[RMDB]
RNA sequence: GGGAACGACUCGAGUAGAGUCGAAAACAUAGUAAGAACUAUGACUUUGAGCUGCAAUACACUGAUGAUCCAGAUAUUAUAUCUGGUAAAGUGAAUCCAAAUGCGGAUAUUGAUGAUAUGAUUGAUCAUUAAACUCUAGUUUCGACUAGAGUUUAAUAAAAGAAACAACAACAACAAC
Reactivity to DMS in 0.01 (KOAc 150mM, MgCl2 10mM, bicine 150mM(pH8.5), 24C), signal-to-noise 9, nucleotides 027 to 126: c020a020u000a020g000u010a160a100g010a110a150c010u000a010u000g000a170c120u010u010u020g010a100g020c040u000g000c040a050a070u020a140c020a010c000u010g010a160u030g010a130u020c000c000a000g000a010u010a070u040u040a130u030a030u000c000u000g000g010u000a010a070a030g020u000g000a100a060u020c060c080a050a070a080u020g020c040g000g000a080u020a070u020u010g010a060u010g000a060u010a050u020g000a110u010u020g000a070u010c070
Reactivity to 2A3 in 0.01 (KOAc 150mM, MgCl2 10mM, bicine 150mM(pH8.5), 24C), signal-to-noise 9, nucleotides 027 to 126: c000a000u010a000g020u030a190a200g050a140a030c010u010a020u020g060a060c050u080u100u200g090a040g030c030u040g000c030a030a070u060a120c010a000c020u060g030a080u070g020a020u210c000c000a010g050a000u010a050u240u270a120u080a010u130c000u000g010g000u020a020a020a000g010u010g050a020a020u030c040c030a050a070a080u120g030c050g000g020a030u040a060u090u110g070a070u040g020a040u050a090u190g170a170u100u130g030a020u060c010
Notes
The data come from the RNA Mapping Database (RMDB), library OK1LIB. The record gives the reactivity of an RNA of 177 nucleotides to DMS and 2A3. For DMS the reverse transcriptase was MarathonRT. The DMS profile rests on 24,560 reads. Reactivities are rounded to 0.1 and cut off at 0 and 3. Reactivities are given for positions 27 through 126.